[RMDB]
RNA sequence: GGGAACGACUCGAGUAGAGUCGAAAACAAGUCCAUAGUAAUUACUCUGAUGAGGUAUUUAAUACUUUCAAACCCAAAUAUGCCUAAAACUAAAGAGUUUUGCUAAAUAAGGAAUUGUUUAUUCAACUCAGUGCUAGUAGCAUAAAAAUCAGAGAAACCCACGAUUUAUAUUCGUAUAAAUCGUGGGAAAAGAAACAACAACAACAAC
Reactivity to 2A3 in 0.01 (KOAc 150mM, MgCl2 10mM, bicine 150mM(pH8.5), 24C), signal-to-noise 1, nucleotides 027 to 156: c010a020a040g040u070c000c000a030u000a010g050u090a070a050u150u070a050c000u000c030u040g110a130u030g050a090g020g000u000a010u000u300u050a120a040u130a090c040u070u160u250c070a130a100a070c010c000c000a000a070a300u050a020u050g000c010c000u040a050a110a040a110c050u160a070a150a000g000a000g000u020u010u020u020g000c000u050a080a080a130u110a140a030g010g010a040a070u020u000g000u010u050u040a100u090u090c040a030a070c030u000c060a010g000u110g070c000u080a140g000u090a030g170c040a010u200a060a050a060a050a050u240c140a040g130a060g100a250a090a000
Structure probing data (2A3) for a 207-nucleotide construct. For 2A3, 393 sequencing reads were counted. Reactivities are rounded to 0.1 and cut off at 0 and 3.